Structure probing data (2A3) for a 207-nucleotide construct. 2A3 adducts were read by reverse transcription with SuperScript II with manganese.

[RMDB]
RNA sequence: GGGAACGACUCGAGUAGAGUCGAAAAACGUACGAGCCGGAUGGGAAAGCAUGCUAGACAUGUCCUAACACGUACGGAAACCAUCCUGCAUGCGAAAGGAUGGAGAGUCCUAUCUAGAGACCACGUCCGUACGGAAACCAUCCACUUGAACGGAUGGGACGGUUACUCGUUUCGACGAGUAACCGUCAAAAGAAACAACAACAACAAC
Reactivity to 2A3 in 0.01 (KOAc 150mM, MgCl2 10mM, bicine 150mM(pH8.5), 24C), signal-to-noise 1, nucleotides 027 to 156: a000c020g000u080a000c000g020a020g140c140c140g090g000a000u000g000g000g050a030a030a030g010c000a000u020g010c060u050a030g000a110c020a000u040g080u190c110c040u070a070a030c300a030c050g000u020a000c000g000g000a000a120a000c000c020a000u000c000c000u000g000c020a080u290g060c120g220a110a020a050g030g000a020u020g000g000a060g000a030g040u000c000c000u030a250u180c000u010a020g060a000g020a300c020c020a120c100g110u050c000c000g020u000a000c000g000g000a050a000a000c000c000a010u000c000c000a000c000u000u000g010a010a010c000g060g080a080u090g040g060